[RMDB]
The data come from the RNA Mapping Database (RMDB), library RFMREP. The record gives the reactivity of an RNA of 177 nucleotides to 2A3 and DMS. For 2A3 the reverse transcriptase was SuperScript II with manganese. DMS adducts were read by reverse transcription with MarathonRT.
RNA sequence: GGGAACGACUCGAGUAGAGUCGAAAAACGAGCUUCGGCUCGUAAAACCGUUCACUCUUCUCGUCAGUCGAUGAUUGAAUUUCGAAUGUCAGAACAGUGCGCGAGAAAAUGCUGGAUUCGUCCAGCAGAGAAGGGUGAGAUUCGUCUCACCCUUCUCAAAAGAAACAACAACAACAAC
Reactivity to 2A3 in 0.01 (KOAc 150mM, MgCl2 10mM, bicine 150mM(pH8.5), 24C), signal-to-noise 2, nucleotides 027 to 126: a000c010g000a000g030c030u090u210c300g110g030c010u030c000g000u000a020a030a010a010c020c000g040u010u020c010a010c000u000c000u010u010c000u030c050g060u010c010a010g020u000c040g010a010u010g030a040u020u300g130a100a190u070u060u000c010g000a010a010u040g010u040c020a000g000a020a020c000a020g000u010g010c000g000c000g040a090g110a090a080a000a030u090g000c010u000g020g010a020u020u020c040g030u040c030c010a010g030c000a000
Reactivity to DMS in 0.01 (KOAc 150mM, MgCl2 10mM, bicine 150mM(pH8.5), 24C), signal-to-noise 1, nucleotides 027 to 126: a040c020g000a000g020c000u000u010c200g040g010c020u000c000g020u000a020a040a100a140c020c010g010u020u000c020a000c000u000c150u000u000c000u010c130g010u000c020a040g000u000c000g020a050u000g000a150u020u010g020a060a260u000u000u000c050g020a120a040u010g000u000c030a010g000a040a020c090a020g010u010g000c010g000c000g010a100g000a040a190a070a160u010g010c000u010g000g000a040u000u000c180g000u000c000c000a010g010c000a060